[RMDB]
RNA sequence: GGGAACGACUCGAGUAGAGUCGAAAAGAAAGCGGGAUCCAAAGACCAGCCAGAAGAUGCCGCAUCAGGUGAAAAGAAACACCUGAUCAAAGAAAACGCGUGAAGCUGGUCAACACGCGAAAGAAAAAUAUAUGCAUGCCUUCGGGCAUGCAUAUAUAAAAGAAACAACAACAACAAC
Reactivity to DMS in 0.01 (KOAc 150mM, MgCl2 10mM, bicine 150mM(pH8.5), 24C), signal-to-noise 1, nucleotides 027 to 126: g000a080a010a060g050c000g000g000g000a010u010c050c070a110a090a190g000a090c010c000a070g010c000c090a250g000a140a130g000a000u000g000c000c030g000c040a130u000c000a020g000g000u030g000a100a070a260a170g030a130a170a110c000a000c000c010u000g040a010u000c130a090a010a100g020a180a120a180a160c010g060c010g030u000g000a090a150g000c010u000g000g060u030c010a150a250c060a000c000g000c000g010a050a040a080g020a020a050a060a070
Reactivity to 2A3 in 0.01 (KOAc 150mM, MgCl2 10mM, bicine 150mM(pH8.5), 24C), signal-to-noise 2, nucleotides 027 to 126: g010a000a030a070g000c000g000g000g020a000u080c030c050a070a050a000g000a000c000c000a000g020c010c000a030g040a210a000g060a150u170g120c000c000g000c000a010u000c010a000g080g010u040g080a260a240a160a090g120a040a130a020c010a000c000c000u000g000a010u060c050a000a200a000g070a000a070a010a070c030g000c000g000u020g000a020a000g010c000u000g000g010u020c010a020a000c000a000c000g000c010g070a060a120a000g060a070a070a060a060